Record summary
The record gives the reactivity of an RNA of 177 nucleotides to DMS and 2A3. The reactions ran in a buffer of 150 mM KOAc, 10 mM MgCl2 and 150 mM bicine (pH 8.5), at 24 C. Source: RMDB library TTRDEL, as collected in RNAgym. 2A3 adducts were read by reverse transcription with SuperScript II with manganese. The 2A3 profile rests on 6,461 reads.

[RMDB]
RNA sequence: GGGAACGACUCGAGUAGAGUCGAAAAGAUAUGGAUGUGCCAAGGGAGCUGCUCGGAAACGAGGCAGCAUCGAUCUUGACACAUCCUAAGUCAAAUCGGAAUAAGUACUUCGGUACUUAUUCCGAAAGACACACUCAUUGUUCGCAAUGAGUGUGUCAAAAGAAACAACAACAACAAC
Reactivity to DMS in 0.01 (KOAc 150mM, MgCl2 10mM, bicine 150mM(pH8.5), 24C), signal-to-noise 2, nucleotides 027 to 126: g000a040u000a210u010g010g000a000u000g000u000g000c000c000a000a030g020g000g000a050g010c000u000g000c000u000c000g010g010a050a030a080c010g000a060g020g030c010a000g000c010a120u000c110g000a060u010c000u000u000g000a020c000a000c000a030u000c000c000u000a000a050g000u000c020a070a150a150u010c000g000g000a010a000u000a000a010g000u000a000c000u010u010c210g020g000u000a000c000u000u010a000u000u000c000c000g000a010a020a080
Reactivity to 2A3 in 0.01 (KOAc 150mM, MgCl2 10mM, bicine 150mM(pH8.5), 24C), signal-to-noise 2, nucleotides 027 to 126: g010a010u020a010u100g000g000a000u000g000u000g000c000c010a000a000g270g190g010a020g030c010u000g000c000u020c010g000g050a020a040a030c010g030a060g290g070c010a010g000c000a020u070c010g080a080u030c000u000u010g020a000c010a000c000a000u000c000c000u000a040a000g030u020c030a000a060a200u040c000g020g000a020a000u010a020a000g000u000a000c000u050u120c300g080g000u000a000c010u020u000a000u010u000c000c000g000a000a000a000